[RMDB]
RNA sequence: GGGAACGACUCGAGUAGAGUCGAAAAAGCUGAGCCGCUCUCCUGAUGAGCCCAUGGCAGGGCGAAACCAGUGUGGUAUGGUAUGGCGAGGCUUGCCUCGGAGUCAAGCGGGAGGGCUCUCGGAGCGCCGCACGGGCGCAGUGCUGCGCGAAACUCUCCAGUCUGUAUUCUUCGGAAUACAGACUGGAAAAGAAACAACAACAACAAC
Reactivity to 2A3 in 0.01 (KOAc 150mM, MgCl2 10mM, bicine 150mM(pH8.5), 24C), signal-to-noise 1, nucleotides 027 to 156: a010g020c020u020g000a010g000c040c050g000c050u020c000u000c020c000u040g010a080u040g010a030g100c000c000c020a030u080g050g000c040a000g000g100g050c010g000a060a000a010c000c000a030g060u050g030u100g230g140u180a150u170g080g020u120a070u060g100g040c020g000a070g040g070c000u000u010g000c000c000u040c150g010g010a160g050u060c060a300a000g130c020g000g020g000a020g030g010g000c010u000c000u010c010g050g020a060g000c010g000c010c000g070c000a000c020g070g250g000c300g090c040a030g000u020g000c000u000g000c010g000c000g050a030a020a010c040u030c000u080
Annotation: An RNA of 207 nucleotides, treated with 2A3 and read out base by base. Source: RMDB library VIROID, as collected in RNAgym.